[RMDB]
An RNA of 177 nucleotides, treated with 2A3 and DMS and read out base by base. The DMS profile rests on 17,284 reads. DMS adducts were read by reverse transcription with MarathonRT. For 2A3 the reverse transcriptase was SuperScript II with manganese.

RNA sequence: GGGAACGACUCGAGUAGAGUCGAAAACUGCAAGCGGUGAGGAGGAUGUCGUCUUUGGGUCUCGGUUCGAGACGCUUGAAUAACGGGAGGAGCGCUGGGGGCGUGUGCCGGUCCCUGCUCUGUAGGGGGUGGUCGCGUGGUUCGCCGCGCGACUACCAAAAGAAACAACAACAACAAC
Reactivity to 2A3 in 0.01 (KOAc 150mM, MgCl2 10mM, bicine 150mM(pH8.5), 24C), signal-to-noise 4, nucleotides 027 to 126: c010u060g010c030a060a000g040c020g020g020u040g020a040g010g020a020g030g000a030u040g020u050c020g000u000c000u060u030u050g040g000g020u000c010u010c000g070g020u080u150c060g010a010g000a010c030g020c050u030u050g070a060a040u100a060a000c010g020g010g010a040g000g010a030g000c040g000c030u030g010g000g000g000g000c010g010u100g000u020g000c000c030g010g000u030c000c000c000u010g010c020u010c040u080g030u040a040g010g020g010
Reactivity to DMS in 0.01 (KOAc 150mM, MgCl2 10mM, bicine 150mM(pH8.5), 24C), signal-to-noise 4, nucleotides 027 to 126: c030u010g000c120a100a060g020c040g020g000u010g000a050g000g010a080g000g010a040u010g000u020c050g010u010c050u010u010u020g000g010g000u000c010u000c040g010g020u030u030c070g000a050g010a050c060g010c050u020u000g000a110a060u040a070a120c080g000g000g000a070g000g000a080g010c100g000c070u020g010g000g010g000g000c050g010u010g020u020g010c020c020g000g000u000c010c010c010u010g000c040u010c050u020g000u010a050g000g000g000